Conditions: 150 mM KOAc, 10 mM MgCl2 and 150 mM bicine (pH 8.5), 24 C. The record gives the reactivity of an RNA of 177 nucleotides to 2A3 and DMS. It was measured as part of the RMDB library M2PK50.
RNA sequence: GGGAACGACUCGAGUAGAGUCGAAAAAGUUAUGAGUUCGCUCAUAACUACAGCGAAAGGCGCUCGGACCCGCAGUCCGCCGUAGGCAUCCCAGCCUGUCCAAGUUGGUAUAUUUCGAUAUACCAAAGUCAUUCAAGAUGUUCGCAUCUUGAAUGACAAAAGAAACAACAACAACAAC
Reactivity to 2A3 in 0.01 (KOAc 150mM, MgCl2 10mM, bicine 150mM(pH8.5), 24C), signal-to-noise 1, nucleotides 027 to 126: a000g010u000u010a000u020g010a000g010u030u100c140g050c060u000c000a000u010a010a000c010u020a020c020a020g070c020g080a190a060a040g090g000c070g010c070u060c040g080g000a060c000c000c090g020c040a010g010u000c020c020g000c000c010g050u040a030g000g050c010a040u040c020c000c000a020g030c000c020u030g030u030c030c010a120a050g120u050u010g030g010u010a000u000a000u030u120u050c210g040a000u000a010u000a010c000c020a000a020a010
Reactivity to DMS in 0.01 (KOAc 150mM, MgCl2 10mM, bicine 150mM(pH8.5), 24C), signal-to-noise 2, nucleotides 027 to 126: a050g000u000u010a000u000g000a000g020u010u010c250g020c010u010c010a000u000a000a010c010u000a070c130a080g000c050g010a080a090a110g000g010c040g020c030u000c070g010g000a120c030c100c090g010c100a110g010u010c060c000g010c210c010g000u000a060g000g000c060a100u000c030c020c030a240g010c070c020u000g020u000c080c120a100a080g030u000u000g010g000u000a000u000a000u000u000u010c190g000a030u000a010u000a000c000c000a020a010a080